[RMDB]
RNA sequence: GGGAACGACUCGAGUAGAGUCGAAAAAUAGUGUUAUUCGUAACACUAUAUAUCCGAACUCAAGGAUUCGUUCCAGACACAUGCAUGCUAGCAUGAAAGCAACUGAACAAGCGUUCGCGCUUGUUAAAUGUUAUUUGAGAUUCGUCUCAAAUAACAUAAAAGAAACAACAACAACAAC
Reactivity to 2A3 in 0.01 (KOAc 150mM, MgCl2 10mM, bicine 150mM(pH8.5), 24C), signal-to-noise 9, nucleotides 027 to 126: a000u000a000g000u000g010u010u010a030u040u070c220g030u030a000a000c000a000c000u000a000u000a000u000a010u010c060c020g020a180a070c010u010c020a030a070g110g000a020u020u010c000g010u010u000c000c000a000g110a050c120a000c000a020u020g040c010a000u160g190c050u120a060g010c010a010u020g050a060a020a000g060c030a040a110c070u160g040a020a000c040a000a000g000c000g030u050u090c220g010c000g000c080u020u000g000u000u010a030a110
Reactivity to DMS in 0.01 (KOAc 150mM, MgCl2 10mM, bicine 150mM(pH8.5), 24C), signal-to-noise 9, nucleotides 027 to 126: a010u000a000g010u000g010u000u000a020u010u010c180g020u000a010a010c000a010c000u000a000u000a040u000a110u010c140c020g000a100a060c010u000c010a080a180g010g000a030u000u000c000g010u000u000c000c000a130g010a160c210a120c030a010u000g000c010a110u010g020c230u000a110g010c010a010u000g000a080a080a110g000c140a060a080c150u010g010a030a010c000a010a010g000c000g020u000u020c220g020c020g010c000u000u000g010u010u000a030a080